[RMDB]
RNA sequence: GGGAACGACUCGAGUAGAGUCGAAAAACAAGCGUCUAAUCAAGUGGCAAGUAGCAUUGACGUCGAGGCUAAAUAUGCACCAGAUGCUUGCUGAUAUCAGACGGCCGACUUGAAGGCAAUAGCAAAGAGUAGCCGCAGUAUUCGUACUGCGGCUACUAAAAGAAACAACAACAACAAC
Reactivity to 2A3 in 0.01 (KOAc 150mM, MgCl2 10mM, bicine 150mM(pH8.5), 24C), signal-to-noise 2, nucleotides 027 to 126: a000c010a000a000g000c000g080u000c000u160a100a080u110c120a220a040g030u040g100g060c030a010a020g000u020a000g040c000a010u000u010g000a040c020g020u030c050g090a150g000g000c010u030a010a150a070u300a220u170g080c130a070c030c120a020g050a110u030g020c000u000u000g000c000u020g020a020u050a070u140c040a030g110a090c000g160g000c030c040g030a030c000u040u050g050a050a000g000g070c050a060a020u130a050g000c110a170a140a000g000
Reactivity to DMS in 0.01 (KOAc 150mM, MgCl2 10mM, bicine 150mM(pH8.5), 24C), signal-to-noise 1, nucleotides 027 to 126: a160c220a050a060g030c120g000u000c000u000a010a030u010c250a140a070g000u000g040g030c010a120a050g090u000a000g070c000a000u080u000g000a300c100g000u000c010g000a060g000g000c040u000a180a000a220u000a010u040g040c000a010c000c230a300g010a080u000g000c000u000u000g000c080u150g000a070u000a080u000c180a140g000a080c000g000g000c000c030g000a140c050u010u000g000a030a120g000g050c000a050a090u040a000g000c050a040a150a280g000

Annotation: Chemical mapping of a 177-nucleotide RNA with 2A3 and DMS. The RNA was probed in 150 mM KOAc, 10 mM MgCl2 and 150 mM bicine (pH 8.5) at 24 C.